[RMDB]
RNA sequence: GGGAACGACUCGAGUAGAGUCGAAAAGAUGCGCCGCAGAUCGCCAUGCCGGACAUGGAAGCGCUGGAACAGAUCCGACUGCCGGAAUUCGUGUUCCCCGAGUUGCCUACGUUCGACGCCACGCCGCGACCUUACUCCCAUUCGUGGGAGUAAGGUCAAAAGAAACAACAACAACAAC
Reactivity to DMS in 0.01 (KOAc 150mM, MgCl2 10mM, bicine 150mM(pH8.5), 24C), signal-to-noise 2, nucleotides 027 to 126: g030a090u000g020c070g030c050c050g010c100a080g000a060u030c130g000c010c020a010u010g020c040c050g010g010a120c090a040u020g010g000a140a110g000c100g000c070u000g000g000a080a100c040a120g000a070u000c010c040g040a250c110u010g000c110c030g030g000a060a140u000u000c080g010u010g020u000u000c010c000c090c050g010a060g000u010u010g010c020c010u000a090c070g000u020u000c040g000a120c090g000c020c030a070c070g010c050c000g020c090
Reactivity to 2A3 in 0.01 (KOAc 150mM, MgCl2 10mM, bicine 150mM(pH8.5), 24C), signal-to-noise 1, nucleotides 027 to 126: g070a030u130g010c030g030c030c020g110c020a000g050a150u120c030g000c010c000a030u050g040c020c020g160g010a080c030a040u020g010g030a160a030g000c020g000c090u070g030g000a060a040c040a040g040a010u030c000c030g060a060c120u150g120c090c010g030g100a020a050u080u080c080g050u110g000u040u050c000c000c000c030g050a030g070u060u020g120c000c000u070a040c040g000u000u020c000g030a010c020g000c020c000a010c030g000c010c000g020c000